[RMDB]
RNA sequence: GGGAACGACUCGAGUAGAGUCGAAAAGAUAUGGACUGGGAGAGGCUAGCCAAUGAUGUCGGAAACGAUUGAGGCUAGAACUACCUCCACUCCAGUCCUAAGUCAAAGGAACGCUUCGGCGUUCCAACUAUCGUACAUUGUUCGCAAUGUACGAUAGAAAAGAAACAACAACAACAAC
Reactivity to DMS in 0.01 (KOAc 150mM, MgCl2 10mM, bicine 150mM(pH8.5), 24C), signal-to-noise 7, nucleotides 027 to 126: g010a050u000a300u010g010g000a030c010u000g000g000g000a200g010a040g000g000c010u000a000g010c000c000a130a140u010g000a100u010g010u010c010g010g010a130a090a140c010g010a020u000u000g000a100g000g020c000u000a000g000a030a030c050u020a300c030c020u010c000c070a090c130u010c020c000a010g000u000c000c000u010a020a080g010u000c040a090a120a110g000g010a020a000c010g020c000u000u010c200g030g010c010g010u000u010c000c000a040a050
Reactivity to 2A3 in 0.01 (KOAc 150mM, MgCl2 10mM, bicine 150mM(pH8.5), 24C), signal-to-noise 5, nucleotides 027 to 126: g020a000u080a040u130g000g000a000c010u010g000g020g000a050g010a010g000g020c000u000a010g000c000c010a130a300u190g070a040u170g030u040c000g020g040a070a050a060c020g000a010u010u050g030a020g000g000c000u010a000g000a010a010c010u090a030c010c000u000c000c010a130c030u050c010c000a000g000u020c000c000u000a070a020g030u020c060a080a060a150g010g010a010a000c020g000c020u060u130c300g140g000c010g000u000u020c000c000a000a000